[RMDB]
RNA sequence: GGGAACGACUCGAGUAGAGUCGAAAACAAGAAUGUCUAAGAGAAAUUAAAGAACCACUUUUAGAGUCUGAUUGGGUAUUGAAACCUAGACCUGUCCAUGAACUUCUCAAACAAUGGAGACCUGACCCUUACUGGCGGUUUUCGAACCGCCAGUAAGAAAAGAAACAACAACAACAAC
Reactivity to 2A3 in 0.01 (KOAc 150mM, MgCl2 10mM, bicine 150mM(pH8.5), 24C), signal-to-noise 2, nucleotides 027 to 126: c050a020a000g140a110a080u080g010u040c000u030a050a000g050a010g040a150a130a210u140u140a230a120a030g060a020a020c020c000a050c010u030u040u000u050a010g000a000g040u000c010u020g090a220u130u130g040g000g010u010a070u070u230g100a230a070a000c040c060u050a030g030a000c000c000u010g010u000c000c000a030u010g040a020a000c050u100u140c030u030c010a070a120a050c050a070a100u120g030g000a020g000a000c000c000u020g030a050c000c040
Reactivity to DMS in 0.01 (KOAc 150mM, MgCl2 10mM, bicine 150mM(pH8.5), 24C), signal-to-noise 1, nucleotides 027 to 126: c090a070a030g050a050a160u000g000u000c030u000a000a010g000a080g000a010a100a090u000u030a030a140a220g030a040a120c010c080a060c000u000u000u000u010a140g010a010g000u010c000u000g000a030u120u000g000g000g000u000a300u000u040g000a000a090a150c060c010u000a090g010a080c000c220u010g010u000c000c000a030u000g000a080a040c100u000u010c000u000c050a010a040a190c210a190a090u010g030g000a090g000a040c000c000u000g000a260c150c120